[RMDB]
RNA sequence: GGGAACGACUCGAGUAGAGUCGAAAAAGGAAAGCAAAGAAAGCAACGGGGCUAGCCGGUGGGUGUUCCGCCCCCCGAGAGGGGAAGAGUGAGGCUUAUCCCGGGGAACUCGACUUAUCGUCCCCACGAGGAUAUCACUUCGGUGAUAUCAAAAGAAACAACAACAACAAC
Reactivity to DMS in 0.01 (KOAc 150mM, MgCl2 10mM, bicine 150mM(pH8.5), 24C), signal-to-noise 9, nucleotides 027 to 129: a050g010g000a040a040a050g000c100a070a060a060g020a000a050a040g020c060a110a110c110g000g000g010g020c070u000a050g020c040c050g010g040u000g020g020g030u050g020u040u020c020c040g000c040c020c000c000c030c030g020a090g000a110g020g010g010g000a060a050g020a070g040u010g000a090g020g010c040u020u020a070u030c030c000c020g000g000g000g000a070a050c040u000c040g000a060c080u020u030a070u000c030g020u000c020c000c020c050a080c190g010a110g000
Reactivity to 2A3 in 0.01 (KOAc 150mM, MgCl2 10mM, bicine 150mM(pH8.5), 24C), signal-to-noise 9, nucleotides 027 to 129: a010g100g010a070a020a000g040c110a060a050a060g060a040a070a010g050c020a030a070c060g020g000g010g020c040u040a020g040c010c010g020g000u060g020g010g010u120g090u170u050c020c020g020c010c000c000c000c000c010g070a050g030a060g080g010g000g000a030a020g040a010g060u200g040a030g010g000c000u030u070a050u090c020c010c000g000g000g000g000a020a020c010u010c020g040a020c010u110u110a070u140c030g020u020c010c000c000c000a030c040g040a060g140
The data come from the RNA Mapping Database (RMDB), library 15KLIB. Structure probing data (DMS and 2A3) for a 170-nucleotide construct. DMS adducts were read by reverse transcription with MarathonRT. The RNA was probed in 150 mM KOAc, 10 mM MgCl2 and 150 mM bicine (pH 8.5) at 24 C.